[RMDB]
RNA sequence: GGGAACGACUCGAGUAGAGUCGAAAACUUCUUCUUUGUCUUCCGGAGCUCCGCCUCGAGUUCCUCCGCUUUCUUUCUUCCACUCACCCACUUCUCGAGAAUAUCUUCUCUUCCAUCGCGCUUCUUCCUAGUGAGUCCUUCGGGACUCACAAAAGAAACAACAACAACAAC
Reactivity to 2A3 in 0.01 (KOAc 150mM, MgCl2 10mM, bicine 150mM(pH8.5), 24C), signal-to-noise 4, nucleotides 027 to 129: c000u070u030c000u070u030c000u080u140u060g120u050c030u040u030c030c020g050g000a020g010c010u000c020c000g050c020c000u010c010g010a030g020u020u030c020c020u000c000c000g030c020u020u060u000c000u010u050u000c000u010u030c020c000a030c020u030c020a060c010c000c000a040c010u050u020c010u000c010g040a040g040a080a070u070a080u090c050u050u010c000u030c000u040u030c010c010a030u020c020g000c010g020c020u080u000c010u010u020c020c020u010a010
Reactivity to DMS in 0.01 (KOAc 150mM, MgCl2 10mM, bicine 150mM(pH8.5), 24C), signal-to-noise 5, nucleotides 027 to 129: c110u040u050c070u030u020c060u000u000u000g020u040c030u040u010c050c080g050g000a150g020c030u020c100c020g040c020c080u030c080g050a100g030u020u010c070c030u020c000c000g020c140u000u020u030c030u030u030u020c030u030u050c040c040a080c060u010c060a120c090c000c040a100c110u040u010c010u020c080g020a060g040a170a070u060a090u040c100u030u000c060u010c010u010u020c010c040a110u030c000g050c050g000c060u030u000c100u020u010c000c070u010a070